The data come from the RNA Mapping Database (RMDB), library OK3TST. Chemical mapping of a 207-nucleotide RNA with 2A3. Reactivities are given for positions 27 through 156.

RNA sequence: GGGAACGACUCGAGUAGAGUCGAAAAAACCGGCUUUACGUACACCCUCUAGCAGAUGGGUUUCACAUCUGGUAGUGGGGAGACCCCAAACACAGCUGGAGCAGACAGGGAGGUGUGGCAAAAGUAGGUGUCACAAGAUGGGGCAUUGUGGGAUGUAGGCCGGUAUGGCGUUCGCGCCAUACCGGCCAAAAGAAACAACAACAACAAC
Reactivity to 2A3 in 0.01 (KOAc 150mM, MgCl2 10mM, bicine 150mM(pH8.5), 24C), signal-to-noise 2, nucleotides 027 to 156: a000a020c060c030g000g000c030u150u060u100a060c030g060u040a010c020a050c020c000c000u000c000u000a060g070c000a000g000a000u010g010g030g020u060u060u080c060a050c000a000u020c010u050g170g180u030a000g000u040g010g010g040g010a000g050a000c000c000c010c030a050a030a060c080a000c020a030g060c020u090g000g030a020g000c000a000g070a100c030a030g000g020g020a030g030g040u080g000u050g040g000c010a000a000a000a040g040u100a080g090g010u050g070u100c020a000c020a080a000g070a040u070g000g000g040g000c000a100u010u090g010u100g040g050g000a030u100g040u130a050